RNA sequence: GGGAACGACUCGAGUAGAGUCGAAAACGGACAGGACAGUCAAGGUCAUCACUAUUGACCAAAGUCAAGGAGACGAAUACGAUUUUGUCAUUGUUGCACUGAGCGACAUAAAUCAGUUCACUAUGGACUGUGUCAGGAAGUUCGCUUCCUGACACAGAAAAGAAACAACAACAACAAC
Reactivity to DMS in 0.01 (KOAc 150mM, MgCl2 10mM, bicine 150mM(pH8.5), 24C), signal-to-noise 2, nucleotides 027 to 126: c020g000g000a030c080a070g000g060a010c030a060g010u010c010a110a230g040g000u000c000a040u000c170a110c180u000a100u010u000g000a020c000c020a160a070a120g000u000c030a030a080g000g010a090g000a080c030g000a020a030u000a040c130g010a040u000u000u010u010g030u000c010a090u000u000g000u000u000g000c030a090c160u020g010a100g010c080g010a050c090a030u010a000a090a100u010c060a030g030u000u000c030a120c190u020a080u000g020g020a040
Reactivity to 2A3 in 0.01 (KOAc 150mM, MgCl2 10mM, bicine 150mM(pH8.5), 24C), signal-to-noise 1, nucleotides 027 to 126: c020g000g060a030c020a030g110g000a010c000a030g040u090c030a070a070g020g030u000c000a020u000c010a060c180u240a180u140u100g000a010c000c000a120a050a010g060u040c050a080a060g170g040a100g100a020c110g040a120a010u090a100c080g070a050u210u000u000u000g020u050c090a060u020u150g090u060u120g020c100a080c120u130g110a040g000c050g040a000c070a090u250a050a050a040u090c020a030g000u050u060c030a030c100u120a200u150g000g040a010